[RMDB]
RNA sequence: GGGAACGACUCGAGUAGAGUCGAAAAACAGCGAAAUUGCAAAUGUAUUGAUUUACCUUACAUUGCAAUCUGUCUUAGUGGAACCUUAUCACCAGUGUAAGACAUAAUUUCUGGGUGUGAAUAAGUACACAGUAUAAGGUAAAUUUUGGUGAAGUAAGUACCUAAAAUCAUUCGUGAUUUUAGGUACAAAAGAAACAACAACAACAAC
Reactivity to DMS in 0.01 (KOAc 150mM, MgCl2 10mM, bicine 150mM(pH8.5), 24C), signal-to-noise 4, nucleotides 027 to 156: a090c040a080g010c260g000a060a080a030u000u000g010c010a020a060a110u000g030u000a020u010u000g010a190u000u000u000a090c050c020u000u000a030c010a030u000u010g000c000a030a040u000c040u000g010u010c040u000u000a130g030u000g010g010a120a100c050c010u000u000a060u010c070a050c020c010a140g040u000g010u000a060a090g000a130c060a080u010a070a100u000u000u000c030u010g020g030g040u010g010u000g000a070a110u010a020a130g010u000a080c030a010c010a110g020u000a060u000a030a030g010g000u000a050a040a100u000u000u000u000g020g010u000g010a070a150g000u010a070a240
Reactivity to 2A3 in 0.01 (KOAc 150mM, MgCl2 10mM, bicine 150mM(pH8.5), 24C), signal-to-noise 7, nucleotides 027 to 156: a000c010a010g050c060g080a050a100a090u020u000g000c020a050a050a200u020g030u020a040u010u100g130a180u090u150u230a090c000c000u000u000a000c010a010u010u010g000c000a000a010u030c040u070g100u040c020u080u110a050g010u030g060g040a060a060c000c000u010u020a030u040c030a020c070c020a030g010u010g030u120a060a030g050a030c040a060u150a080a150u160u150u030c040u040g040g060g020u050g020u010g060a150a050u090a130a000g050u070a020c010a000c010a020g060u120a040u030a090a010g010g020u030a020a080a120u140u150u080u130g060g010u060g010a060a030g040u090a110a040